[RMDB]
RNA sequence: GGGAACGACUCGAGUAGAGUCGAAAAGGCGGAUCACAAGGUCAAGAGAUUGAAACCAUCCUGGCUAACACAGUGAAACCCGUCUCUACUAAAAAUACAAAAACUUAGCUGGGCGUGGUGGUGGGCACUUUCUAGUUUAGUUCGCUAAACUAGAAAGAAAAGAAACAACAACAACAAC
Reactivity to 2A3 in 0.01 (KOAc 150mM, MgCl2 10mM, bicine 150mM(pH8.5), 24C), signal-to-noise 5, nucleotides 027 to 126: g010g000c010g000g000a010u020c010a010c010a070a080g030g020u030c030a110a020g070a010g020a080u050u150g070a160a030a010c050c010a020u020c000c000u010g010g010c000u040a150a020c120a020c040a130g020u000g030a050a060a060c010c000c010g000u010c020u000c000u020a040c010u080a110a070a030a050a060u220a100c100a030a130a010a130a030c060u090u070a030g020c020u030g020g040g000c050g030u070g020g020u050g010g060u070g000g010g000c020a030
Reactivity to DMS in 0.01 (KOAc 150mM, MgCl2 10mM, bicine 150mM(pH8.5), 24C), signal-to-noise 7, nucleotides 027 to 126: g030g010c030g000g010a070u010c020a040c050a110a110g000g010u000c030a030a050g000a060g000a100u010u010g010a080a090a060c140c070a050u000c010c010u000g010g000c010u000a050a060c140a080c180a080g010u000g000a030a050a090c150c000c000g010u000c010u000c060u000a070c050u010a010a040a030a050a040u010a070c100a030a050a050a040a080c180u000u000a050g010c040u000g000g010g010c110g010u000g010g010u000g010g010u000g010g000g010c120a080
Chemical mapping of a 177-nucleotide RNA with 2A3 and DMS. For 2A3, 7,883 sequencing reads were counted. Values cover nucleotides 27 to 126. For 2A3 the reverse transcriptase was SuperScript II with manganese.